[RMDB]
The record gives the reactivity of an RNA of 207 nucleotides to DMS and 2A3. For DMS the reverse transcriptase was MarathonRT.

RNA sequence: GGGAACGACUCGAGUAGAGUCGAAAAGUAAUAGAUAACUGGAUGCAGCGUAGGUCUCAACGCAUAUCCAGUACGAAUGGUACCUGUAAAUAAAAUAUGAGACCUAGUACAAGUACCAACAGAAGGAUAAGCGAUGGUGAUGUCAAUCACAUUUGCACUACUCGACUAAUUUCGAUUAGUCGAGUAGAAAAGAAACAACAACAACAAC
Reactivity to DMS in 0.01 (KOAc 150mM, MgCl2 10mM, bicine 150mM(pH8.5), 24C), signal-to-noise 3, nucleotides 027 to 156: g040u010a110a100u000a180g010a170u000a080a060c010u010g020g000a040u000g000c130a080g000c010g030u000a050g010g030u000c010u000c000a100a060c000g010c020a060u000a110u000c010c010a020g020u000a040c080g000a120a120u000g010g020u000a020c030c000u020g040u000a030a120a150u000a080a090a060a070u000a100u020g000a030g010a030c010c020u000a140g030u000a020c000a010a010g030u000a040c010c000a040a140c080a080g000a060a060g020g020a100u000a070a140g020c070g010a070u000g020g020u000g030a060u000g000u000c160a100a080u010c030a030c030a130u010u000u010g070c060a220
Reactivity to 2A3 in 0.01 (KOAc 150mM, MgCl2 10mM, bicine 150mM(pH8.5), 24C), signal-to-noise 6, nucleotides 027 to 156: g020u060a010a110u060a130g100a100u140a100a040c010u000g030g010a020u050g090c230a180g000c300g000u010a030g020g000u000c000u000c010a000a020c010g000c020a000u020a000u120c000c000a000g010u010a010c040g090a090a160u070g010g000u010a000c000c010u000g010u010a040a070a050u140a050a110a090a030u190a060u030g010a000g000a010c000c020u020a020g020u020a010c000a000a040g000u000a010c010c010a010a030c020a050g140a120a040g090g030a080u040a170a040g020c020g050a010u070g090g110u030g010a030u030g100u190c140a080a030u020c020a000c000a080u060u070u200g000c020a020
Values are in units of 0.01, from 0 to 300, in steps of 10. The RNA was probed in 150 mM KOAc, 10 mM MgCl2 and 150 mM bicine (pH 8.5) at 24 C. 2A3 adducts were read by reverse transcription with SuperScript II with manganese.